[RMDB]
RNA sequence: GGGAACGACUCGAGUAGAGUCGAAAACCCGGGGUCCUGAGUCCUUCGGGGCCCGGUUGCUCGGAAGUGAUGAAUUGAUCAGAUAGACGAGGCCGGGCUUGUCCCGGGCCACUGAUUAUCGAGGCGACUUAACAUUCAGAUUCGUCUGAAUGUUAAGAAAAGAAACAACAACAACAAC
Reactivity to 2A3 in 0.01 (KOAc 150mM, MgCl2 10mM, bicine 150mM(pH8.5), 24C), signal-to-noise 5, nucleotides 027 to 126: c010c000c000g000g000g000g010u010c000c010u020g040a050g130u210c060c050u110u010c040g000g000g000g000c010c000c000g010g020u080u190g040c010u000c010g110g030a160a120g120u070g110a100u080g040a100a250u220u150g020a040u030c000a030g130a230u160a070g150a040c060g010a070g000g000c000c000g000g000g000c000u020u180g060u080c000c000c000g000g020g010c000c000a040c020u030g020a050u050u090a040u160c040g010a040g040g030c030g010a020
Reactivity to DMS in 0.01 (KOAc 150mM, MgCl2 10mM, bicine 150mM(pH8.5), 24C), signal-to-noise 7, nucleotides 027 to 126: c000c010c000g020g020g010g010u000c010c020u000g000a040g010u040c180c090u040u000c010g020g010g010g010c000c000c000g000g000u000u020g000c030u000c060g010g000a190a120g010u010g010a070u010g010a120a110u030u030g010a030u000c020a060g000a190u010a080g010a220c100g000a120g010g010c000c000g000g000g010c010u020u010g000u030c010c000c000g010g010g010c020c020a050c050u010g000a070u010u000a050u010c030g010a080g000g010c060g000a180